[RMDB]
RNA sequence: GGGAACGACUCGAGUAGAGUCGAAAAGAUAUGGACGUUUCCCACCUAUGAAGUCCAUCGGAAACGAUGGAGUGGAGGUGUCAAACGUCCUAAGUCAAAGCACAUGUGACUUCGGUCACAUGUGCAAUCUCUACGACUGGUUCGCCAGUCGUAGAGAAAAAGAAACAACAACAACAAC
Reactivity to DMS in 0.01 (KOAc 150mM, MgCl2 10mM, bicine 150mM(pH8.5), 24C), signal-to-noise 2, nucleotides 027 to 126: g010a020u000a100u000g000g010a000c000g020u000u010u000c040c090c010a010c010c000u000a270u020g000a140a160g000u000c000c000a010u000c000g010g010a030a040a070c010g010a000u020g000g000a020g010u000g000g010a000g020g010u000g010u000c080a000a000a000c010g010u000c000c000u000a000a050g010u000c000a090a110a160g010c000a000c000a020u010g010u000g020a010c000u000u010c210g050g020u000c000a000c000a010u000g010u000g020c000a010a010
Reactivity to 2A3 in 0.01 (KOAc 150mM, MgCl2 10mM, bicine 150mM(pH8.5), 24C), signal-to-noise 2, nucleotides 027 to 126: g010a010u010a010u090g000g010a010c010g010u000u040u050c160c130c000a010c010c020u300a300u260g010a010a010g040u000c000c010a000u000c000g020g000a010a020a000c010g000a000u000g010g040a060g120u010g010g010a010g000g040u010g020u090c000a070a020a090c000g000u000c000c010u010a010a000g000u000c060a080a110a040g030c000a010c010a010u000g010u000g010a000c000u010u180c300g010g000u000c000a000c000a000u000g000u000g010c000a000a000